[RMDB]
RNA sequence: GGGAACGACUCGAGUAGAGUCGAAAAGGGCGGUUUCGACCGCCCAAAAAAGGGGUCCAUGUGGGACAUGACGGUACUGAAGCCUCCACGGUAUGGCCGUCAACAGCCGUAACAUCAUGGACGGAGGCACCCAAAAAGGGAAGAUUCGUCUUCCCAACCUAAUGCUACUUUUCGAAGUAGCAUUAGGAAAAGAAACAACAACAACAAC
Reactivity to DMS in 0.01 (KOAc 150mM, MgCl2 10mM, bicine 150mM(pH8.5), 24C), signal-to-noise 2, nucleotides 027 to 156: g030g070g080c010g060g010u000u000u000c180g000a000c010c000g020c000c010c000a020a000a030a040a020a050g000g000g040g020u000c030c000a010u000g070u010g010g020g000a120c030a180u000g030a050c020g020g020u010a040c040u000g000a070a130g010c010c010u000c000c040a200c050g040g010u000a100u000g030g040c000c000g010u010c100a090a110c150a230g030c100c030g040u010a130a090c090a090u000c100a100u030g010g000a010c070g000g000a260g010g030c030a100c020c010c030a010a090a060a090a150g010g000g000a030a000g010a070u000u010c190g010u000c000u000u000c010c000c020a010a050
Reactivity to 2A3 in 0.01 (KOAc 150mM, MgCl2 10mM, bicine 150mM(pH8.5), 24C), signal-to-noise 2, nucleotides 027 to 156: g010g010g020c000g000g130u040u150u240c170g090a030c000c010g000c000c000c000a010a000a000a000a000a010g020g000g010g000u000c000c000a000u010g000u000g040g000g030a030c040a050u050g010a010c050g010g000u170a180c010u060g050a080a040g030c000c000u000c030c000a030c060g000g020u080a090u180g100g000c040c010g020u080c020a040a040c040a020g030c000c050g110u080a040a080c030a050u220c010a040u110g070g000a070c050g000g000a000g020g000c040a070c020c000c000a010a050a090a030a020g040g030g000a040a020g010a020u020u210c250g010u010c100u000u000c000c000c000a010a020